An RNA of 177 nucleotides, treated with DMS and read out base by base. Source: RMDB library RFMREP, as collected in RNAgym. Conditions: 150 mM KOAc, 10 mM MgCl2 and 150 mM bicine (pH 8.5), 24 C. For DMS the reverse transcriptase was MarathonRT.
RNA sequence: GGGAACGACUCGAGUAGAGUCGAAAAGUAAUAGUAAUUGAACUUAGUACGAGAGGAACCGUUCAUUCACGUAAUUGGUAUUUACAUCUGUUUGAUAAGACAAUGUUGUGAAGCUACCACGUGUUGGCUAUUUUUCAAGCUUCGGCUUGAAAAAUAGAAAAGAAACAACAACAACAAC
Reactivity to DMS in 0.01 (KOAc 150mM, MgCl2 10mM, bicine 150mM(pH8.5), 24C), signal-to-noise 2, nucleotides 027 to 126: g020u000a110a100u000a100g000u000a090a060u000u000g010a020a020c000u000u000a010g020u000a130c020g000a300g000a230g000g000a130a050c190c220g000u000u000c010a040u000u000c070a020c040g000u020a100a140u010u000g000g010u000a070u000u000u000a020c000a000u000c040u000g000u010u000u000g000a170u000a070a090g000a000c000a010a100u000g010u010u010g010u000g000a020a020g010c160u000a040c120c050a050c130g010u000g020u000u000g020g010